Conditions: 150 mM KOAc, 10 mM MgCl2 and 150 mM bicine (pH 8.5), 24 C. An RNA of 177 nucleotides, treated with 2A3 and DMS and read out base by base. The 2A3 profile rests on 1,279 reads. For DMS, 2,106 sequencing reads were counted. It was measured as part of the RMDB library OK2TRN.
RNA sequence: GGGAACGACUCGAGUAGAGUCGAAAAUAAUACACGGCGCUGGCGGCAGUGGCAAGUCAAGGGCCCUACAAGAGUAUAUGCGAAAUAACAGGGAUGACCCUAUUGUCACGAUUCUCCCCACCAAUGAACUACUCCAUAGGUUCGCCUAUGGAGUAGUAAAAGAAACAACAACAACAAC
Reactivity to 2A3 in 0.01 (KOAc 150mM, MgCl2 10mM, bicine 150mM(pH8.5), 24C), signal-to-noise 2, nucleotides 027 to 126: u020a030a070u120a010c030a000c050g060g050c010g020c040u050g060g000c000g020g000c020a000g010u000g010g010c030a040a020g050u080c080a090a050g040g010g000c000c000c000u030a030c060a180a050g060a010g250u170a030u050a020u300g100c030g060a100a020a080u140a080a070c070a060g100g000g000a020u080g190a100c000c040c010u020a100u020u040g040u040c010a000c020g000a000u130u050c030u040c000c000c000c000a020c000c040a050a040u150g040a090
Reactivity to DMS in 0.01 (KOAc 150mM, MgCl2 10mM, bicine 150mM(pH8.5), 24C), signal-to-noise 3, nucleotides 027 to 126: u030a100a090u000a110c040a110c060g020g050c040g000c040u010g020g020c060g040g020c060a050g020u000g000g010c040a080a030g000u000c150a090a060g050g000g030c010c010c030u000a060c140a120a120g000a130g010u000a090u000a030u000g010c070g000a040a070a060u010a060a120c140a110g020g010g020a160u000g020a180c010c020c000u000a070u000u000g000u000c010a070c050g030a120u010u000c080u000c030c020c010c050a070c120c160a050a120u010g000a120